Source information:
This 177-nucleotide RNA was probed chemically with DMS and 2A3. Source: RMDB library OK2TRN, as collected in RNAgym. For DMS the reverse transcriptase was MarathonRT. Conditions: 150 mM KOAc, 10 mM MgCl2 and 150 mM bicine (pH 8.5), 24 C. The DMS profile rests on 9,089 reads.

RNA sequence: GGGAACGACUCGAGUAGAGUCGAAAAUAUGGAAGGUGUUGAAGGCAUUCCAGUGCUAUUUGUGGCCUGGAAUCAACCAGAUGUGUUUAGGCUUGGCACUGGCUUUAAGUUCCAAACACUGGUUAGAACGUUGCUUACCAUUCGUGGUAAGCAACGUAAAAGAAACAACAACAACAAC
Reactivity to DMS in 0.01 (KOAc 150mM, MgCl2 10mM, bicine 150mM(pH8.5), 24C), signal-to-noise 6, nucleotides 027 to 126: u020a100u010g010g010a090a100g010g010u000g010u000u010g010a100a130g000g020c130a100u000u010c010c000a010g010u000g020c000u000a100u000u000u010g010u000g010g000c010c000u000g010g000a030a020u000c090a050a050c030c030a040g010a130u000g020u010g010u000u000u010a050g000g000c020u000u000g010g010c020a180c160u000g020g010c170u000u000u010a030a070g030u010u000c020c030a060a040a030c040a080c010u000g000g010u000u010a090g000a140
Reactivity to 2A3 in 0.01 (KOAc 150mM, MgCl2 10mM, bicine 150mM(pH8.5), 24C), signal-to-noise 4, nucleotides 027 to 126: u260a060u080g090g020a020a040g030g010u040g020u060u070g050a070a040g060g020c030a010u030u000c000c000a000g020u060g100c010u050a170u250u180u280g260u160g030g000c000c000u000g020g000a010a030u020c010a010a020c010c010a020g100a190u110g080u000g040u060u030u050a010g000g000c010u010u060g000g000c010a050c220u070g140g010c000u030u090u030a040a020g030u150u100c010c000a010a000a000c020a000c020u010g000g050u020u020a060g020a070